[RMDB]
RNA sequence: GGGAACGACUCGAGUAGAGUCGAAAACGACCGCCUGACGGGUCGGACAUAGCGUCAGGAUCAUCCGUGGCAGUCACCACGGUAAUCAUGUGUCUGAUGAUGGUUUUCCAUCUUAAUCUGACUGUGUCGUAGCAGUCUACAGUACUAUGACAUUAGAGCUAAUAUGCUCCUUCGGGAGCAUAUUAGCAAAAGAAACAACAACAACAAC
Reactivity to 2A3 in 0.01 (KOAc 150mM, MgCl2 10mM, bicine 150mM(pH8.5), 24C), signal-to-noise 2, nucleotides 027 to 156: c040g030a030c000c000g080c010c010u010g000a000c000g000g000g000u000c000g050g070a000c000a080u230a030g090c000g000u000c000a000g020g020a010u080c060a020u000c000c000g030u020g030g000c090a110g040u090c100a000c000c000a000c000g020g000u000a010a110u040c040a000u030g080u020g040u100c000u050g070a060u000g000a000u000g030g090u140u180u180u030c020c000a000u000c000u030u200a110a100u190c110u030g000a000c000u010g000u010g050u100c050g040u050a030g000c020a010g010u040c020u130a100c020a020g000u010a050c000u040a040u020g010a020c050a050u120u180a020g000a010